[RMDB]
RNA sequence: GGGAACGACUCGAGUAGAGUCGAAAAGAUAUGGAGCUGGUAGCGAAGAACCUACCCACCUAGUCGGAAACGACUAGAGGGGGAGCUGAGAGGCUCCUAAGUCAAAAGCGGAUCUUCGGAUCCGCAAGUAAUUAGGUGAGUUCGCUCACCUAAUUACAAAAGAAACAACAACAACAAC
Reactivity to 2A3 in 0.01 (KOAc 150mM, MgCl2 10mM, bicine 150mM(pH8.5), 24C), signal-to-noise 3, nucleotides 027 to 126: g000a000u020a000u090g000g020a000g000c030u060g140g170u300a000g000c040g070a190a060g070a200a170c040c080u100a060c010c030c010a020c010c000u000a010g010u000c010g000g000a020a010a010c000g010a010c000u010a000g040a070g030g000g020g020g070a050g000c020u070g050a190g050a210g300g030c010u000c010c000u010a010a010g000u020c020a000a050a110a050g000c000g000g000a000u000c020u060u100c270g020g010a000u000c070c000g000c000a000a000
Reactivity to DMS in 0.01 (KOAc 150mM, MgCl2 10mM, bicine 150mM(pH8.5), 24C), signal-to-noise 3, nucleotides 027 to 126: g010a030u000a060u020g000g010a030g040c000u000g020g040u010a020g030c010g010a140a130g000a120a110c180c100u000a200c000c000c010a030c020c000u000a000g000u000c000g010g010a050a030a050c000g000a000c000u000a010g010a100g000g010g000g000g000a080g010c010u000g000a120g030a300g020g000c010u000c000c000u010a020a060g000u000c030a050a080a140a150g000c000g000g010a000u000c000u010u000c260g020g010a010u000c000c000g030c000a010a030
Source: RMDB library TTRDEL, as collected in RNAgym. An RNA of 177 nucleotides, treated with 2A3 and DMS and read out base by base. The RNA was probed in 150 mM KOAc, 10 mM MgCl2 and 150 mM bicine (pH 8.5) at 24 C. Reactivities are given for positions 27 through 126.